[RMDB]
RNA sequence: GGGAACGACUCGAGUAGAGUCGAAAAAGUAAAGAUGAUGAAAUGAGAGGAUGUUCAACUGUGUUUAGUGUUUGAGCCUGACCUCUGUAUUAUGGGAAAGACACACUUACCGGGAAAAGAUCCUUGGCUGGUUACAAAAGGAUGGGAAAGGUGCCCAGCCGGUAAUACGGUUCGCCGUAUUACCGGCAAAAGAAACAACAACAACAAC
Reactivity to 2A3 in 0.01 (KOAc 150mM, MgCl2 10mM, bicine 150mM(pH8.5), 24C), signal-to-noise 1, nucleotides 027 to 156: a010g080u110a010a000a010g020a080u080g010a020u000g100a010a070a140u190g000a020g000a000g000g010a050u090g090u090u110c040a060a070c060u030g050u000g060u210u180u150a030g000u020g060u040u030u120g040a030g020c040c030u060g080a120c020c000u120c090u030g040u210a300u200u180a070u300g000g000g000a000a110a000g050a050c000a000c020a000c030u050u030a040c040c000g010g000g000a000a200a000a000g020a050u050c000c190u080u070g000g020c000u000g000g010u060u000a010c000a010a070a000a030g030g000a000u030g020g000g000a090a000a000g070g000u030g000c010c000c060a010

This 207-nucleotide RNA was probed chemically with 2A3. As a SHAPE reagent, 2A3 marks flexible, mostly unpaired nucleotides at the ribose 2'-OH. 2A3 adducts were read by reverse transcription with SuperScript II with manganese. For 2A3, 352 sequencing reads were counted.